An RNA of 177 nucleotides, treated with 2A3 and DMS and read out base by base.

[RMDB]
RNA sequence: GGGAACGACUCGAGUAGAGUCGAAAAAUAUGAGGAUCUUGUGCUCCCCAAAAUCCACUGCGUGCAAUUUGAGACUUUUCAAUAGGAGUAUAUAUGUCAUAAUCAUCUACUACUGGAAACGUGCCAAUCGCAAAAUUAAUUUCGAUUAAUUUUGCGAAAAAGAAACAACAACAACAAC
Reactivity to 2A3 in 0.01 (KOAc 150mM, MgCl2 10mM, bicine 150mM(pH8.5), 24C), signal-to-noise 2, nucleotides 027 to 126: a010u230a060u110g030a050g010g050a050u010c040u070u080g040u080g070c020u070c040c000c030c000a070a050a000a010u030c020c000a030c040u050g000c060g030u050g000c010a030a050u040u080u090g020a030g050a070c010u080u090u020u030c060a040a060u020a080g050g020a030g080u020a010u000a020u010a020u170g060u040c020a030u050a180a040u090c020a020u010c010u070a080c000u000a010c000u030g050g000a070a060a010c010g020u010g080c020c030a020a080
Reactivity to DMS in 0.01 (KOAc 150mM, MgCl2 10mM, bicine 150mM(pH8.5), 24C), signal-to-noise 4, nucleotides 027 to 126: a090u010a080u010g010a130g000g000a040u000c050u000u000g030u010g020c080u000c020c010c010c050a060a050a090a070u010c030c030a100c090u010g000c090g010u000g000c080a070a090u000u000u000g010a180g000a080c050u000u000u000u000c030a030a090u000a040g000g010a050g000u010a040u000a070u010a090u020g010u010c120a060u010a070a070u000c070a040u000c040u010a040c020u000a040c050u000g000g000a030a040a070c110g010u000g010c010c040a060a150
Record summary: The reactions ran in a buffer of 150 mM KOAc, 10 mM MgCl2 and 150 mM bicine (pH 8.5), at 24 C. It was measured as part of the RMDB library OK2TST. Values cover nucleotides 27 to 126.